[RMDB]
RNA sequence: GGGAACGACUCGAGUAGAGUCGAAAAUUUUGGGAUUUCGGAACUUCCUCAUUUGGAGAAAUAUUUGUGUGUGAAGGACCGUUGAUCCUUCAUACCACGUACUGAGUUUCGGUACAUACCGUCGAAGCAUUUGACAAAAGUUCGCUUUUGUCAAAUGAAAAGAAACAACAACAACAAC
Reactivity to DMS in 0.01 (KOAc 150mM, MgCl2 10mM, bicine 150mM(pH8.5), 24C), signal-to-noise 7, nucleotides 027 to 126: u010u000u010u010g010g010g000a110u000u000u000c020g010g000a040a070c030u000u010c100c010u010c150a130u010u010u020g020g010a090g010a130a090a100u000a040u010u000u010g010u010g030u000g020u000g010a010a000g000g000a030c020c090g010u000u010g000a160u000c000c000u000u000c010a010u000a010c050c030a060c150g010u000a020c090u000g010a060g020u000u000u000c010g010g010u000a050c120a130u010a110c050c040g010u010c090g010a150a120g010
Reactivity to 2A3 in 0.01 (KOAc 150mM, MgCl2 10mM, bicine 150mM(pH8.5), 24C), signal-to-noise 4, nucleotides 027 to 126: u060u070u040u120g040g020g020a030u050u070u100c030g000g030a040a030c010u060u020c010c010u050c040a110u140u110u230g120g020a060g070a060a130a020u190a090u060u180u100g110u010g000u000g000u010g020a000a000g000g000a020c040c110g070u040u170g040a170u000c000c000u000u000c000a010u010a000c030c000a020c040g030u050a010c020u010g020a030g120u040u040u030c020g000g020u020a030c020a030u100a080c030c060g060u090c050g020a040a000g050
About this RNA:
The record gives the reactivity of an RNA of 177 nucleotides to DMS and 2A3. The data come from the RNA Mapping Database (RMDB), library OK2TST. 2A3 adducts were read by reverse transcription with SuperScript II with manganese. The 2A3 profile rests on 4,574 reads.